[RMDB]
RNA sequence: GGGAACGACUCGAGUAGAGUCGAAAAGGGCCGGGUGCCGAUCGCACCCGAGCUCGAGGUGCUGCGUCCGCUCGGGAGCACCGACAUGGGCAACGUCACCAACGUGAUCCCCGGUAUCCACCCGGUACAGUGAUAGGUGAUUCGUCACCUAUCACUGAAAAGAAACAACAACAACAAC
Reactivity to DMS in 0.01 (KOAc 150mM, MgCl2 10mM, bicine 150mM(pH8.5), 24C), signal-to-noise 5, nucleotides 027 to 126: g000g010g010c000c010g000g010g020u010g010c020c160g010a120u010c220g000c010a020c000c000c000g010a040g020c010u010c010g000a090g000g030u010g010c060u010g010c220g010u000c020c070g020c200u000c050g020g000g000a120g020c100a050c010c020g000a080c110a080u000g000g010g000c150a090a170c170g000u000c050a080c080c060a130a050c100g010u000g010a110u000c050c030c000c020g000g000u000a050u010c050c080a140c090c020c010g010g010u000a140
Reactivity to 2A3 in 0.01 (KOAc 150mM, MgCl2 10mM, bicine 150mM(pH8.5), 24C), signal-to-noise 2, nucleotides 027 to 126: g020g000g010c000c000g010g000g000u010g010c070c100g130a190u150c060g000c010a010c000c030c010g010a070g020c000u000c010g010a060g020g020u050g000c030u050g030c040g060u000c000c030g000c070u030c020g030g020g030a120g080c070a050c040c000g020a020c020a110u300g030g000g000c030a080a020c020g090u130c060a020c040c020a050a030c070g050u070g050a080u120c010c000c010c010g020g020u040a080u000c040c020a040c030c010c010g000g040u080a060